Conditions: 150 mM KOAc, 10 mM MgCl2 and 150 mM bicine (pH 8.5), 24 C. Structure probing data (2A3) for a 207-nucleotide construct. The data come from the RNA Mapping Database (RMDB), library M2RFPK.
RNA sequence: GGGAACGACUCGAGUAGAGUCGAAAAAACUCAGCUAGGGAGAGUAUAACAUUCACGUUGACGAGACCUAGACGAAACACAGAGGAAAAUUAUUAAUCACUGGAUAGUAUUAGUAAUGACUCUGUGUAAAACUCUUCUACGUUCGCGUAGAAGAGAACUCGAAUACAUCCUUCGGGAUGUAUUCGAGAAAAGAAACAACAACAACAAC
Reactivity to 2A3 in 0.01 (KOAc 150mM, MgCl2 10mM, bicine 150mM(pH8.5), 24C), signal-to-noise 1, nucleotides 027 to 156: a000a000c010u010c000a000g010c010u000a010g000g000g000a010g020a050g040u130a200u070a300a020c050a050u110u090c130a100c230g010u000u060g090a020c000g000a050g070a090c000c000u010a000g010a040c000g000a020a020a000c000a000c000a010g000a000g020g030a160a080a060a000u000u000a000u000u000a000a000u020c060a020c010u010g000g130a160u300a300g000u020a000u000u000a000g000u000a000a000u000g010a020c000u010c000u000g000u000g000u000a000a000a000a000c000u000c000u000u010c020u000a000c000g050u000u020c280g030c000g060u000a000g000a000a010g000a000g000a000a010